[RMDB]
RNA sequence: GGGAACGACUCGAGUAGAGUCGAAAAGAACGCGAACUCGCCAAGAUGACCAAACCGCACCUCUACUUCGAGUGGGGCGGUAAGGACCACACCUACGCGGAGAAGUUGCAGGACGAGCCGACGCCGGCCGACCGCCGCACGAUGAUGGCGACCGCAGCGCUAUCAUACGGUUCGCCGUAUGAUAGCGAAAAGAAACAACAACAACAAC
Reactivity to 2A3 in 0.01 (KOAc 150mM, MgCl2 10mM, bicine 150mM(pH8.5), 24C), signal-to-noise 1, nucleotides 027 to 156: g090a010a090c070g010c010g030a050a050c070u040c000g070c000c000a010a010g040a280u110g010a090c010c000a040a040a070c050c000g040c040a150c060c020u090c090u130a160c050u140u150c190g040a080g090u050g000g010g020g000c000g000g000u010a000a000g020g000a070c100c000a020c010a040c040c080u090a010c040g000c030g010g000a070g020a150a050g250u160u110g100c080a020g090g000a010c100g020a010g000c010c010g090a300c270g140c030c100g060g000c000c000g000a040c000c040g210c070c000g020c000a000c070g000a010u080g010a060u050g070g000c010g000a010c010c010g000c000a030g080